Description
An RNA of 177 nucleotides, treated with 2A3 and DMS and read out base by base. It was measured as part of the RMDB library OK2TST. The reactions ran in a buffer of 150 mM KOAc, 10 mM MgCl2 and 150 mM bicine (pH 8.5), at 24 C. For DMS, 2,033 sequencing reads were counted.

RNA sequence: GGGAACGACUCGAGUAGAGUCGAAAACGUGGCCAAGGGCAAUCUUGAUACGAUGCGCGGCAUCGAGGCGGUUUCCAAAAAUCGCCGUCAGCUUCUGUCCUAUGGGGCGACGGUCCUUCUGGAAACACGUACGACCAUAGUUCGCUAUGGUCGUACGAAAAGAAACAACAACAACAAC
Reactivity to 2A3 in 0.01 (KOAc 150mM, MgCl2 10mM, bicine 150mM(pH8.5), 24C), signal-to-noise 2, nucleotides 027 to 126: c000g010u000g110g000c000c010a020a020g030g000g010c000a010a030u020c020u050u080g040a030u030a100c050g030a030u010g050c300g060c070g270g000c010a030u030c000g020a050g040g000c010g020g000u000u020u030c080c000a000a280a000a000a000u070c020g020c030c000g000u010c010a020g000c060u180u070c050u090g040u040c020c030u050a190u230g170g010g010g000c020g050a000c000g040g050u040c040c000u150u120c050u090g080g080a020a090a010c070a010
Reactivity to DMS in 0.01 (KOAc 150mM, MgCl2 10mM, bicine 150mM(pH8.5), 24C), signal-to-noise 2, nucleotides 027 to 126: c080g020u000g010g030c000c010a100a060g000g000g000c050a040a030u010c050u010u010g020a130u010a100c110g020a040u000g000c010g010c210g040g010c010a010u000c010g000a220g000g000c040g030g010u000u000u000c080c240a000a030a030a050a030u000c110g010c000c000g000u000c010a050g000c070u030u000c120u010g010u000c040c040u000a110u010g000g030g020g000c000g000a000c020g000g010u000c110c010u000u000c090u000g000g020a070a030a070c110a130